[RMDB]
RNA sequence: GGGAACGACUCGAGUAGAGUCGAAAAGCAACUUAGGAUUUUAGGCUCCCCGUGCGUGUCUAGAACCAUGCCGGGCCAAACCCACGGGGGCUGGCGGUCCCCGUGCGGUCAAAAUCAAACCGCUGGAAAAACAGUUCUAGCUUCGGCUAGAACUGAAGCGUUAAGAAGAGUUCGCUCUUCUUAACGCAAAAGAAACAACAACAACAAC
Reactivity to 2A3 in 0.01 (KOAc 150mM, MgCl2 10mM, bicine 150mM(pH8.5), 24C), signal-to-noise 1, nucleotides 027 to 156: g050c040a030a090c080u120u170a100g080g020a200u100u150u100u190a120g020g000c040u210c020c000c000c000g010u050g060c010g000u000g000u060c080u140a090g060a080a030c040c000a000u000g000c010c000g010g000g000c000c020a090a010a000c000c000c000a000c000g000g000g000g000g000c000u000g000g000c000g000g000u000c000c010c000c000g030u000g000c060g000g050u080c010a060a010a000a190u070c030a110a050a180c040c000g000c010u050g010g060a090a050a000a000a000c000a000g000u000u020c000u020a000g000c030u020u050c220g110g000c000u000a000g000a020a000c000u010g000a000a000